[RMDB]
RNA sequence: GGGAACGACUCGAGUAGAGUCGAAAAGACCGCAUCAUGUCGCGACUGGGCGCCAAUGACAAUAUCCUAGCGGCGCAAUCGACGUUUUUCGUCGAGCUAGCAGAGACGAAGAAGAUGCUGUCGGAGGCGACGCCACGGUCGCUCGUCAUCCUCGACGCCUCAUGUAAGAAUUCGUUCUUACAUGAGGAAAAGAAACAACAACAACAAC
Reactivity to DMS in 0.01 (KOAc 150mM, MgCl2 10mM, bicine 150mM(pH8.5), 24C), signal-to-noise 2, nucleotides 027 to 156: g000a160c020c030g020c050a170u000c040a100u000g000u010c050g040c020g030a130c040u000g030g000g020c010g020c000c020a060a210u010g000a100c010a040a090u000a280u000c020c050u010a160g000c020g000g000c000g090c020a090a060u010c000g010a010c010g020u000u010u000u000u020c030g060u000c020g010a130g020c090u010a140g010c060a180g010a300g030a070c000g050a090a120g000a090a160g020a050u000g030c030u020g000u000c030g030g000a300g000g030c010g010a010c020g040c000c020a130c070g070g010u000c060g020c000u000c020g000u000c050a080u000c020c000u000c020g000a140c110g010
Reactivity to 2A3 in 0.01 (KOAc 150mM, MgCl2 10mM, bicine 150mM(pH8.5), 24C), signal-to-noise 7, nucleotides 027 to 156: g050a040c030c040g040c050a100u100c040a050u170g080u150c050g010c010g030a040c030u030g000g020g010c000g010c000c000a020a030u050g010a020c010a040a040u040a040u120c020c030u040a040g040c030g060g000c030g000c040a020a070u020c000g010a010c010g010u030u040u080u190u300c000g000u030c010g000a020g050c050u120a050g000c030a020g050a020g030a170c010g040a070a050g050a080a020g010a020u040g010c040u020g010u000c000g010g010a010g000g000c030g050a120c040g060c040c020a170c050g040g010u020c010g000c010u010c000g000u020c000a080u080c010c060u100c070g030a020c040g030

This 207-nucleotide RNA was probed chemically with DMS and 2A3. Reactivities are given for positions 27 through 156. The RNA was probed in 150 mM KOAc, 10 mM MgCl2 and 150 mM bicine (pH 8.5) at 24 C. For 2A3 the reverse transcriptase was SuperScript II with manganese. For 2A3, 6,969 sequencing reads were counted.